RNA sequence: GGGAACGACUCGAGUAGAGUCGAAAACGGAGACCCUGAGAAAAGUGGAGGAAACGCUACACUACACAUUCAGGCACGGCUACGUGAAACAGGCCUGCAAGAUUUCCAACGUGGAACUUAGCAACCUUAUCUCCUACUUGGGCAUCUUGCACGAAAAGGUAGUGGUUAUUUUCGAAUAACCACUACCAAAAGAAACAACAACAACAAC
Reactivity to DMS in 0.01 (KOAc 150mM, MgCl2 10mM, bicine 150mM(pH8.5), 24C), signal-to-noise 2, nucleotides 027 to 156: c020g010g000a080g010a090c080c030c020u000g010a120g010a110a100a160a090g010u000g020g000a050g000g020a270a130a030c100g030c020u000a090c020a030c040u000a080c080a070c040a160u000u000c030a040g020g000c120a020c110g050g020c020u000a030c070g130u010g010a140a140a090c050a040g020g000c050c010u020g000c040a030a010g000a050u000u010u000c010c000a020a070c120g040u010g000g000a030a060c060u000u010a060g000c050a120a120c140c180u010u010a010u020c040u000c020c010u000a040c060u010u020g010g000g070c160a020u000c000u000u000g000c020a010c060g010a020a070a110a220
Reactivity to 2A3 in 0.01 (KOAc 150mM, MgCl2 10mM, bicine 150mM(pH8.5), 24C), signal-to-noise 4, nucleotides 027 to 156: c030g020g020a030g040a060c020c010c000u030g010a040g040a030a140a040a020g010u050g020g040a070g030g080a140a170a030c110g010c060u050a020c030a020c050u110a030c050a000c000a060u100u090c020a000g040g010c050a020c120g030g000c020u080a030c030g030u050g040a030a090a020c010a030g090g010c000c010u010g000c000a000a010g000a010u000u030u000c000c000a020a030c120g010u010g000g040a070a090c070u110u130a130g060c070a110a120c050c000u160u200a120u110c050u020c010c000u000a050c010u010u020g000g000g000c000a000u000c020u010u020g010c010a010c060g070a030a130a000a000